[RMDB]
RNA sequence: GGGAACGACUCGAGUAGAGUCGAAAAUAGCAUAUGGAUGGCGGGCAGAUAGAUGGCCAGGAGAUUACGGUAUCCCCGGUUGUCUUAGUAAAACAGAGGCCGCCCAUGCGUCGUCCUUCGCCACCGAACCCUAUACGAGGUUCGCCUCGUAUAGGGUAAAAGAAACAACAACAACAAC
Reactivity to 2A3 in 0.01 (KOAc 150mM, MgCl2 10mM, bicine 150mM(pH8.5), 24C), signal-to-noise 6, nucleotides 027 to 126: u120a010g040c050a020u080a060u240g050g070a080u070g070g040c040g040g000g020c010a020g040a160u110a020g040a010u090g010g000c010c020a010g020g010a200g000a020u100u120a120c110g060g040u160a050u040c000c000c000c000g010g000u010u020g000u000c010u040u130a130g050u190a090a100a070a010c070a010g090a050g100g060c010c030g020c000c000c000a040u070g010c040g040u030c010g020u010c000c000u060u070c050g000c000c020a020c000c010g030a050
Reactivity to DMS in 0.01 (KOAc 150mM, MgCl2 10mM, bicine 150mM(pH8.5), 24C), signal-to-noise 2, nucleotides 027 to 126: u000a060g030c090a100u020a050u040g000g000a080u010g000g000c030g000g010g000c120a120g000a090u030a070g000a020u030g000g020c000c000a060g040g000a040g030a030u010u010a120c160g010g000u020a070u000c000c010c010c070g010g000u000u000g010u000c010u000u030a070g000u050a040a070a060a100c120a080g000a060g000g000c040c010g000c020c000c060a060u000g010c020g010u000c070g000u000c010c010u010u030c040g000c020c010a080c040c020g030a080
This 177-nucleotide RNA was probed chemically with 2A3 and DMS.
For 2A3, 6,339 sequencing reads were counted.
Source: RMDB library OK1LIB, as collected in RNAgym.